The record gives the reactivity of an RNA of 177 nucleotides to DMS and 2A3.
For 2A3, 2,324 sequencing reads were counted.
For 2A3 the reverse transcriptase was SuperScript II with manganese.
DMS (dimethyl sulfate) methylates the pairing face of unpaired adenines and cytosines.
The RNA was probed in 150 mM KOAc, 10 mM MgCl2 and 150 mM bicine (pH 8.5) at 24 C.
Reactivities are given for positions 27 through 126.
For DMS the reverse transcriptase was MarathonRT.
RNA sequence: GGGAACGACUCGAGUAGAGUCGAAAAACAUAAAGGAGCUUAGGCUAUCUUGGAAAGUUGCCCCCCAGCUUCUGAACUGGACCUUUCUAUGGGGUUGUAGAACCCCAGCCUGGGACCACGCCAACCACCUAUCUUAUCACUUCGGUGAUAAGAUAGGAAAAGAAACAACAACAACAAC
Reactivity to DMS in 0.01 (KOAc 150mM, MgCl2 10mM, bicine 150mM(pH8.5), 24C), signal-to-noise 6, nucleotides 027 to 126: a100c050a080u010a080a090a050g010g000a060g010c010u000u010a070g030g000c010u010a040u010c090u010u010g010g000a110a050a060g000u000u010g010c040c040c050c090c040c030a080g010c030u000u000c080u000g000a090a170c120u000g000g010a180c070c010u000u010u000c040u000a110u010g000g010g010g010u000u000g010u010a080g000a010a020c010c000c000c010a020g000c070c030u000g010g010g010a100c030c020a060c090g010c090c060a060a110c070c100a180
Reactivity to 2A3 in 0.01 (KOAc 150mM, MgCl2 10mM, bicine 150mM(pH8.5), 24C), signal-to-noise 2, nucleotides 027 to 126: a000c050a040u180a070a030a040g030g000a070g010c010u040u070a020g030g000c020u060a050u140c030u070u100g070g060a130a070a060g100u120u200g100c070c000c020c050c000c000a010g030c010u130u060c020u040g010a040a020c020u010g000g040a040c000c040u040u110u040c050u030a090u070g000g020g010g000u000u020g030u050a140g060a150a030c010c000c000c000a000g010c000c000u010g000g020g000a000c030c000a010c020g050c010c010a030a040c020c000a040